[RMDB]
RNA sequence: GGGAACGACUCGAGUAGAGUCGAAAAGCUGCAGAGCGCGCUCGAUUUGCUGAAUGCGCCCACUCAGGCGCUGUUGGGGCGUCCGUUGGUGGGCAAUGGCGCCAAUGGGGCCCCGGGGACUGGGGCACGUACCACGGGUAUUCGUACCCGUGGUACGAAAAGAAACAACAACAACAAC
Reactivity to DMS in 0.01 (KOAc 150mM, MgCl2 10mM, bicine 150mM(pH8.5), 24C), signal-to-noise 2, nucleotides 027 to 126: g020c040u010g010c070a100g010a120g010c100g000c050g010c040u000c060g000a090u010u000u010g010c050u000g010a110a050u010g010c130g010c000c020c030a140c090u000c120a080g010g010c030g040c010u010g010u000u010g030g000g000g020c010g010u000c000c000g010u000u010g010g010u000g030g020g020c050a050a060u020g010g020c060g020c000c000a030a040u000g000g000g000g010c000c000c020c010g000g000g000g040a140c100u010g000g020g020g010c150a090
Reactivity to 2A3 in 0.01 (KOAc 150mM, MgCl2 10mM, bicine 150mM(pH8.5), 24C), signal-to-noise 1, nucleotides 027 to 126: g060c050u140g020c010a000g040a060g160c050g030c000g000c060u060c030g100a140u090u110u300g000c060u070g080a160a080u110g070c050g040c020c020c000a030c010u130c050a020g050g020c050g000c060u040g070u150u260g050g080g030g030c000g100u060c000c000g040u050u140g000g020u040g050g040g000c010a030a020u010g050g010c020g000c030c000a040a050u060g050g000g050g000c000c000c000c060g000g010g020g050a020c090u090g000g000g000g000c030a020